[RMDB]
An RNA of 207 nucleotides, treated with 2A3 and read out base by base. High 2A3 reactivity points to a flexible backbone, as in loops and unpaired stretches. It was measured as part of the RMDB library ARCHII.

RNA sequence: GGGAACGACUCGAGUAGAGUCGAAAAAAACCUAAUGAUGCAUGUCAAGAGCGUGUGACUCUUGUAAAUCAACAUACAUUUAAAAUAGUCGCAAACGACGAAACUUACGCACUAGCAGCUUAAGGGCUGCUUAGGACGGCACAAAUUGCCUUUGGUUUCGACUAAUAUCGUUCGCGAUAUUAGUCGAAAAAGAAACAACAACAACAAC
Reactivity to 2A3 in 0.01 (KOAc 150mM, MgCl2 10mM, bicine 150mM(pH8.5), 24C), signal-to-noise 2, nucleotides 027 to 156: a000a000a000c070c030u080a100a050u110g090a010u060g010c130a000u150g030u090c020a030a000g000a000g000c010g010u130g040u080g130a120c000u000c000u000u000g110u210a000a000a160u010c010a000a000c000a030u050a050c020a000u060u130u300a150a150a070a030u070a080g010u000c000g030c060a000a200a190c020g040a000c000g000a110a000a000c110u140u100a020c070g040c090a010c090u040a000g020c030a000g000c000u050u130a070a120g060g020g020c000u000g000c000u000u030a000g000g080a030c040g000g030c020a000c010a080a180a010u090u090g020c000c000u160u120u120g070g000u040u030
The RNA was probed in 150 mM KOAc, 10 mM MgCl2 and 150 mM bicine (pH 8.5) at 24 C.